An RNA of 207 nucleotides, treated with DMS and 2A3 and read out base by base. The reactions ran in a buffer of 150 mM KOAc, 10 mM MgCl2 and 150 mM bicine (pH 8.5), at 24 C.

[RMDB]
RNA sequence: GGGAACGACUCGAGUAGAGUCGAAAAAGGGUGGUUCGCCACCCUAAAAAAUCCUAAGUCUGAUGAGUAGAUCGAAGAACUUGAGGCAUCGGAAACGAUGCCAAUGAUGGGGAGAUCGAAAGUCAGAUAUGGAAAAAAAGACGGUUUCGACCGUCAACGUACUUUAUACUUUCGAGUAUAAAGUACGAAAAGAAACAACAACAACAAC
Reactivity to DMS in 0.01 (KOAc 150mM, MgCl2 10mM, bicine 150mM(pH8.5), 24C), signal-to-noise 1, nucleotides 027 to 156: a090g000g010g000u020g030g010u000u000c210g050c050c030a020c000c000c000u000a000a010a100a150a000a030u000c000c010u000a100a180g010u000c000u000g000a070u000g000a050g040u000a070g000a010u000c030g000a100a160g000a210a170c030u000u000g000a200g030g000c010a030u000c000g040g000a170a060a170c000g040a080u020g000c010c000a000a000u010g010a170u010g010g000g000g000a300g030a090u000c000g030a070a250a300g010u000c020a030g040a000u000a180u000g040g000a000a000a050a050a010a100a150g000a030c010g000g000u020u000u000c150g010a090c000c000g030u000c030a030a060
Reactivity to 2A3 in 0.01 (KOAc 150mM, MgCl2 10mM, bicine 150mM(pH8.5), 24C), signal-to-noise 3, nucleotides 027 to 156: a010g000g010g000u000g010g020u020u010c030g020c010c000a000c000c020c000u030a000a000a000a010a000a010u030c010c000u060a150a020g030u000c010u000g000a000u020g010a000g010u000a010g000a010u000c010g070a240a040g000a080a030c010u030u030g020a020g010g000c000a000u000c000g020g000a030a030a040c000g000a000u000g000c010c010a000a020u050g010a000u010g010g050g000g000a050g000a000u000c010g020a010a000a000g000u000c000a000g000a000u000a000u000g010g060a000a040a010a020a040a020a040g000a000c000g000g020u050u100u220c160g090a040c000c000g000u000c010a000a000
DMS adducts were read by reverse transcription with MarathonRT.